[RMDB]
RNA sequence: GGGAACGACUCGAGUAGAGUCGAAAACAUGGACAGACGGUGUCUUGCCCUGAUGUCCGGUUUUUUCCGUCAGCGCAGUGCCCGGCUGUUCUGUUGCGGCGCGUCUCCCCACAUAGCGCGGGAUGAACCGAAACUAGUAGUUCGCUACUAGUUUCGGAAAAGAAACAACAACAACAAC
Reactivity to DMS in 0.01 (KOAc 150mM, MgCl2 10mM, bicine 150mM(pH8.5), 24C), signal-to-noise 1, nucleotides 027 to 126: c030a020u020g020g010a010c000a010g000a160c070g010g010u030g040u010c060u010u000g000c020c060c020u000g000a090u000g000u010c120c060g010g000u000u000u000u010u000u010c020c020g010u000c010a010g010c300g020c010a010g020u000g000c030c030c000g000g020c000u000g000u030u000c000u000g000u000u000g020c060g010g010c060g000c020g020u030c060u000c010c000c000c100a110c220a030u000a060g000c030g030c060g040g010g000a130u010g010a090a150